Structure probing data (2A3 and DMS) for a 177-nucleotide construct.
As a SHAPE reagent, 2A3 marks flexible, mostly unpaired nucleotides at the ribose 2'-OH.
For 2A3, 874 sequencing reads were counted.
For 2A3 the reverse transcriptase was SuperScript II with manganese.
Conditions: 150 mM KOAc, 10 mM MgCl2 and 150 mM bicine (pH 8.5), 24 C.
[RMDB]
RNA sequence: GGGAACGACUCGAGUAGAGUCGAAAAUUAGAGUUUUUGCAGGCUGUACAAGAAGCACAGUACUAGCAUCUGCUUCUGGUGAGGGUGUAAGGAAGCUUCCAUUCAUGACAGAAGAUGAAGGGGAGUGCAUUUUCGUAGGGUUCGCCCUACGAAAAUGAAAAGAAACAACAACAACAAC
Reactivity to 2A3 in 0.01 (KOAc 150mM, MgCl2 10mM, bicine 150mM(pH8.5), 24C), signal-to-noise 1, nucleotides 027 to 126: u050u010a070g010a030g100u060u000u020u150u100g000c030a020g020g010c030u020g030u000a050c030a110a210g190a130a040g180c000a000c010a100g000u080a200c050u060a030g060c000a040u020c010u050g000c080u020u030c030u020g070g020u100g020a030g020g030g000u040g000u050a070a020g030g080a130a000g000c030u020u000c030c000a010u000u060c010a020u040g080a100c050a070g160a180a030g000a000u010g030a000a000g000g010g020g010a020g000u060g010
Reactivity to DMS in 0.01 (KOAc 150mM, MgCl2 10mM, bicine 150mM(pH8.5), 24C), signal-to-noise 2, nucleotides 027 to 126: u000u010a090g010a100g010u000u000u000u010u000g010c010a030g000g010c010u020g020u010a040c090a100a140g010a100a120g000c030a030c090a060g000u000a040c040u000a120g020c040a070u020c060u000g000c010u000u000c030u000g000g010u020g010a070g000g000g030u000g010u020a070a090g000g010a060a130g010c000u000u000c000c020a090u000u000c000a020u000g030a140c160a160g000a060a130g000a010u000g020a020a020g000g010g000g010a030g010u000g010